[RMDB]
RNA sequence: GGGAACGACUCGAGUAGAGUCGAAAAAGCAUACCAGAAAUACAUUCAAAAUCUACAGCUACAAAAUGUAAAGAAGGUAGUCCAAAUAUAGUACUACAUAAUGAGGCUCCCUGUUGGUAGUAUAUAACGGUAGAACUAAGUUCGCUUAGUUCUACCGAAAAGAAACAACAACAACAAC
Reactivity to DMS in 0.01 (KOAc 150mM, MgCl2 10mM, bicine 150mM(pH8.5), 24C), signal-to-noise 2, nucleotides 027 to 126: a090g010c120a130u000a050c030c000a060g000a200a170a060u000a040c040a030u000u000c090a100a030a170a090u010c060u020a090c100a060g000c060u000a040c140a160a110a050a020u000g010u000a010a060a070g010a290a070g010g010u000a000g000u010c040c050a050a080a140u000a070u010a060g020u000a030c010u000a000c020a030u000a040a040u010g010a120g010g010c020u000c010c000c000u000g020u000u010g010g020u000a010g020u000a000u000a050u000a040a150
Reactivity to 2A3 in 0.01 (KOAc 150mM, MgCl2 10mM, bicine 150mM(pH8.5), 24C), signal-to-noise 1, nucleotides 027 to 126: a010g020c000a050u040a100c000c000a000g010a020a030a010u090a060c000a020u080u080c020a070a070a030a130u020c020u060a150c060a090g050c000u040a010c040a080a150a010a020u080g010u100a040a120a110g030a050a010g070g000u000a010g010u010c090c020a000a150a000u170a000u030a170g110u010a060c000u020a010c020a030u300a160a090u200g040a010g100g030c030u000c000c010c000u020g060u100u160g070g000u040a020g030u000a090u010a010u010a050a060
This 177-nucleotide RNA was probed chemically with DMS and 2A3. The 2A3 profile rests on 622 reads. Reactivities are given for positions 27 through 126. The DMS profile rests on 1,615 reads.